Background:
This 207-nucleotide RNA was probed chemically with 2A3 and DMS. The 2A3 profile rests on 2,676 reads. For DMS, 3,225 sequencing reads were counted.
RNA sequence: GGGAACGACUCGAGUAGAGUCGAAAAUCGGUUGUUUCUCUGAAGGCAUGAUCACCCCGUCCGAUGCGGAAGUUCGUGCUUCAGUCGAACGCGAAAGUCGGACGGCGGCCAUGAGUCGCAACGCAAAUAUACAUUUAGUAGUUCGCUACUAAAUGAAUCAAUGUCUAUCGUUCGCGAUAGACAUUGAAAAAGAAACAACAACAACAAC
Reactivity to 2A3 in 0.01 (KOAc 150mM, MgCl2 10mM, bicine 150mM(pH8.5), 24C), signal-to-noise 4, nucleotides 027 to 156: u160c000g050g000u000u010g010u010u010u000c050u000c030u070g110a170a040g090g020c040a030u070g010a040u100c050a050c000c010c000c000g000u000c010c020g020a010u040g100c100g130g060a060a100g020u000u000c020g020u050g110c050u160u130c010a050g060u060c030g000a000a010c020g010c010g130a140a120a010g010u000c000g010g000a020c000g000g000c010g000g000c020c010a040u060g020a030g120u090c060g030c100a060a040c050g010c040a000a120a020u160a020u040a050c000a000u000u020u000a000g000u000a000g000u010u050c210g010c110u000a000c010u010a010a000a000u000g020a010a030
Reactivity to DMS in 0.01 (KOAc 150mM, MgCl2 10mM, bicine 150mM(pH8.5), 24C), signal-to-noise 2, nucleotides 027 to 156: u000c040g020g050u010u000g020u000u000u000c010u000c020u020g000a200a110g030g040c020a110u010g000a080u000c130a150c030c000c000c000g000u000c020c080g010a090u000g050c110g020g000a100a070g030u000u000c000g000u000g020c070u000u000c100a130g050u000c100g030a020a020c030g000c030g010a080a050a220g030u000c000g000g030a060c010g010g020c070g000g030c030c000a030u000g000a110g010u000c020g010c020a030a080c060g010c030a050a000a140u010a190u000a190c000a020u000u010u010a010g010u000a020g000u000u000c300g030c000u000a010c000u000a010a000a010u010g000a100a140
The reactions ran in a buffer of 150 mM KOAc, 10 mM MgCl2 and 150 mM bicine (pH 8.5), at 24 C.
The data come from the RNA Mapping Database (RMDB), library M2RFPK.
2A3 adducts were read by reverse transcription with SuperScript II with manganese.
Values cover nucleotides 27 to 156.